The data come from the RNA Mapping Database (RMDB), library M2RFPK. An RNA of 207 nucleotides, treated with 2A3 and read out base by base. For 2A3, 733 sequencing reads were counted.

[RMDB]
RNA sequence: GGGAACGACUCGAGUAGAGUCGAAAAAAUUAGAGGCAAUUUGAAGUAAUUUAAAUUAGCUCAACCCUACUGCACUUACCGAACUAGAUAACGGUGUAGUAGGGGUAAAUUCUCCGCAUUCGGUGCGCAACCACCUGAGGUUUCGACCUCAGGUGAAUCGAGAAUUGUACUUCGGUACAAUUCUCGAAAAAGAAACAACAACAACAAC
Reactivity to 2A3 in 0.01 (KOAc 150mM, MgCl2 10mM, bicine 150mM(pH8.5), 24C), signal-to-noise 1, nucleotides 027 to 156: a000a000u200u090a050g000a050g030g000c000a020a010u000u000u060g000a000a040g020u270a020a300u040u020u050a050a040a030u020u030a080g000c010u000c010a000a000c000c000c000u000a000c000u000g030c000a000c020u050u070a080c050c010g110a140a050c030u030a080g090a270u090a250a080c070g000g000u000g000u000a000g000u000a000g000g000g000g020u010a000a000a000u040u000c080u010c000c000g000c020a000u030u090c020g100g000u010g000c010g000c030a150a080c070c000a000c000c000u010g000a000g050g000u110u120u170c220g100a080c030c000u000c000a000g010g000u010g000a000a030